Structure probing data (2A3 and DMS) for a 177-nucleotide construct. It was measured as part of the RMDB libraries RFM100 and RFMREP. DMS (dimethyl sulfate) methylates the pairing face of unpaired adenines and cytosines. Values cover nucleotides 27 to 126. Conditions: 150 mM KOAc, 10 mM MgCl2 and 150 mM bicine (pH 8.5), 24 C. DMS adducts were read by reverse transcription with MarathonRT. Values are in units of 0.01, from 0 to 300, in steps of 10.
[RMDB]
RNA sequence: GGGAACGACUCGAGUAGAGUCGAAAACAUGUGAGACUAAUAUACCUGCAUGCUAGUCUUCAGGUUCUGAUGGAAGUGACAUGCGUGAUGCUGUCAUGUGUUACUGUCAGGACUCGACUGGUGUGCGCACGUACGGCGAUUUCGAUCGCCGUACGUGAAAAGAAACAACAACAACAAC
Reactivity to 2A3 in 0.01 (KOAc 150mM, MgCl2 10mM, bicine 150mM(pH8.5), 24C), signal-to-noise 5, nucleotides 027 to 126: c070a040u230g100u160g100a140g080a090c090u200a090a120u180a040u060a230c000c000u060g000c000a010u000g000c000u010a000g010u000c000u120u120c050a010g000g000u010u000c010u000g000a010u010g020g010a110a020g030u010g000a000c010a100u300g010c040g060u280g140a140u300g010c020u010g010u040c010a000u010g100u010g030u050u080a120c000u000g000u000c000a000g000g010a010c030u000c040g000a000c010u000g000g000u000g000u000g000c000g000
Reactivity to DMS in 0.01 (KOAc 150mM, MgCl2 10mM, bicine 150mM(pH8.5), 24C), signal-to-noise 2, nucleotides 027 to 126: c100a040u000g000u010g010a100g040a100c060u020a070a130u010a120u040a170c030c050u010g030c040a000u000g030c010u020a000g000u010c010u000u000c300a120g000g010u000u000c000u000g020a000u020g040g000a110a160g000u010g010a010c010a020u020g000c000g000u030g000a130u040g010c000u000g010u030c010a000u000g000u000g020u060u010a130c000u010g010u010c000a020g010g010a000c000u000c160g000a020c000u000g000g000u000g040u000g000c000g070